The data come from the RNA Mapping Database (RMDB), library OK3TST.
The record gives the reactivity of an RNA of 207 nucleotides to 2A3.
The reactions ran in a buffer of 150 mM KOAc, 10 mM MgCl2 and 150 mM bicine (pH 8.5), at 24 C.
Reactivities are given for positions 27 through 156.

[RMDB]
RNA sequence: GGGAACGACUCGAGUAGAGUCGAAAAGAACAAGUGAUUAUGCUACCUUUGCACAGUCAGGAUACCACAGCUGUUGAACAUAUGUCACUGGGGACAUGUCUAAUACUGGUAAUGCUAGAGGUGGUGUUUUUGGUAAACAGGCAGGGUAAGAUUUGCACGUAAUCCACGAGUUCGCUCGUGGAUUACGAAAAGAAACAACAACAACAAC
Reactivity to 2A3 in 0.01 (KOAc 150mM, MgCl2 10mM, bicine 150mM(pH8.5), 24C), signal-to-noise 1, nucleotides 027 to 156: g050a040a040c070a040a040g020u030g090a140u130u100a050u120g010c000u000a020c050c090u120u070u100g020c010a010c060a120g030u080c010a010g020g010a010u050a020c000c000a010c000a020g000c010u010g020u180u080g070a100a000c010a020u090a080u100g050u040c010a010c140u100g010g000g040g000a000c000a040u100g040u100c010u040a050a000u020a230c010u010g020g020u080a140a000u070g040c090u160a010g010a010g000g000u000g010g000u030g050u000u010u000u000u030g030g030u100a150a000a000c020a030g000g000c000a000g000g020g010u010a020a000g030a060u060u060u100g010c070a040